[RMDB]
RNA sequence: GGGAACGACUCGAGUAGAGUCGAAAAGAUAUGGAUUACUACCAAUCGAUAAGUUGCAGUCGGAAACGACUGGCAACUUUUGACGAUUGAAGUAAUCCUAAGUCAAACUUGCGCUUCGGCGCAAGAACGAAUUAGUUAACUUCGGUUAACUAAUUCGAAAAGAAACAACAACAACAAC
Reactivity to DMS in 0.01 (KOAc 150mM, MgCl2 10mM, bicine 150mM(pH8.5), 24C), signal-to-noise 6, nucleotides 027 to 126: g000a050u000a300u010g000g000a010u000u000a000c000u000a140c220c010a000a010u000c000g020a160u010a020a010g000u000u000g010c010a030g000u000c000g010g000a120a090a170c000g010a010c000u010g030g020c010a000a010c000u000u000u000u000g010a210c150g010a010u000u000g000a090a020g010u000a000a010u000c000c000u000a020a080g000u000c030a090a110a270c000u000u000g000c010g020c000u000u010c260g030g010c000g010c000a000a010g000a090a190
Reactivity to 2A3 in 0.01 (KOAc 150mM, MgCl2 10mM, bicine 150mM(pH8.5), 24C), signal-to-noise 4, nucleotides 027 to 126: g020a010u070a040u130g010g010a010u010u020a010c010u070a140c160c040a000a010u000c010g120a080u010a250a010g000u010u010g000c010a000g010u000c010g020g020a090a100a070c020g010a000c000u020g090g020c000a000a000c010u010u020u020u040g050a050c030g000a000u000u020g020a030a000g000u000a000a000u000c000c010u000a090a010g030u000c010a050a050a160c010u010u010g000c000g000c010u080u100c300g190g000c020g000c010a000a000g000a000a000